[RMDB]
Structure probing data (2A3 and DMS) for a 177-nucleotide construct. For DMS, 19,688 sequencing reads were counted. It was measured as part of the RMDB library OK2TST. The reactions ran in a buffer of 150 mM KOAc, 10 mM MgCl2 and 150 mM bicine (pH 8.5), at 24 C.

RNA sequence: GGGAACGACUCGAGUAGAGUCGAAAAGGCACCGCCGGGCUUGGUGCCGAGUUGUCCCUCAGCGCCCGCGAGAUCCGCCUGGAUAGCGCGGUCUCGCUACCCAGCGGCAAGCUGAGCCUGAGCGCCACCCUACUAGGUAUUUCGAUACCUAGUAGGGAAAAGAAACAACAACAACAAC
Reactivity to 2A3 in 0.01 (KOAc 150mM, MgCl2 10mM, bicine 150mM(pH8.5), 24C), signal-to-noise 8, nucleotides 027 to 126: g000g000c010a000c020c020g060c040c040g060g010g010c060u100u140g010g000u020g010c020c020g010a010g010u130u190g070u060c010c040c000u010c010a040g020c030g040c040c020c000g010c000g000a010g010a030u070c040c020g040c060c110u170g140g140a210u180a110g060c080g010c040g030g000u000c010u000c000g000c000u030a050c020c020c010a030g020c040g060g000c070a090a110g020c040u020g010a010g050c010c030u090g060a060g030c060g010c030c010a050
Reactivity to DMS in 0.01 (KOAc 150mM, MgCl2 10mM, bicine 150mM(pH8.5), 24C), signal-to-noise 9, nucleotides 027 to 126: g010g010c010a030c020c010g020c070c070g010g010g000c070u000u010g010g010u000g010c000c010g010a040g010u000u000g000u010c040c050c010u010c090a090g010c080g020c070c020c170g010c010g010a040g010a030u010c010c010g020c040c050u000g010g010a120u010a070g010c080g020c100g000g010u000c010u000c000g020c000u000a040c050c030c020a060g010c050g010g010c110a080a110g010c020u000g000a060g010c050c050u000g000a080g000c070g010c050c110a200